Background:
Chemical mapping of a 177-nucleotide RNA with DMS and 2A3. For DMS the reverse transcriptase was MarathonRT. For 2A3 the reverse transcriptase was SuperScript II with manganese. Conditions: 150 mM KOAc, 10 mM MgCl2 and 150 mM bicine (pH 8.5), 24 C. For DMS, 2,046 sequencing reads were counted.
[RMDB]
RNA sequence: GGGAACGACUCGAGUAGAGUCGAAAACGAGGCCAUUCACCGCAAAGAAAGCGUCGAAAUUCUGGAUGAUGACAAGCCAGUAGACAUUGACUUGGUCAGGGUCCACCCAAACAGCUCUUUGGCAGGCAUCCAACCUUAGUUUCGACUAAGGUUGGAUAAAAGAAACAACAACAACAAC
Reactivity to DMS in 0.01 (KOAc 150mM, MgCl2 10mM, bicine 150mM(pH8.5), 24C), signal-to-noise 3, nucleotides 027 to 126: c070g020a090g010g020c020c080a140u000u010c060a100c060c040g040c060a060a060a100g010a040a110a080g000c020g000u000c060g010a090a050a110u010u000c070u000g010g000a020u010g010a220u000g000a060c070a070a030g010c000c000a020g010u000a120g040a040c180a070u010u010g000a050c020u000u000g020g000u000c020a030g020g000g010u000c020c060a090c040c060c040a050a070a080c100a110g000c060u000c050u000u000u010g010g020c040a100g010g030c160
Reactivity to 2A3 in 0.01 (KOAc 150mM, MgCl2 10mM, bicine 150mM(pH8.5), 24C), signal-to-noise 2, nucleotides 027 to 126: c020g020a000g040g060c020c020a030u050u070c050a030c040c030g030c040a000a060a060g090a040a070a020g060c020g040u030c030g060a080a060a160u150u050c040u060g060g000a030u050g020a010u040g050a040c050a070a020g000c020c020a030g040u060a070g030a080c030a050u020u120g030a030c020u040u070g080g040u100c020a010g100g000g000u020c010c020a050c040c010c030a010a070a100c020a010g000c020u030c010u080u050u050g080g010c070a050g090g000c020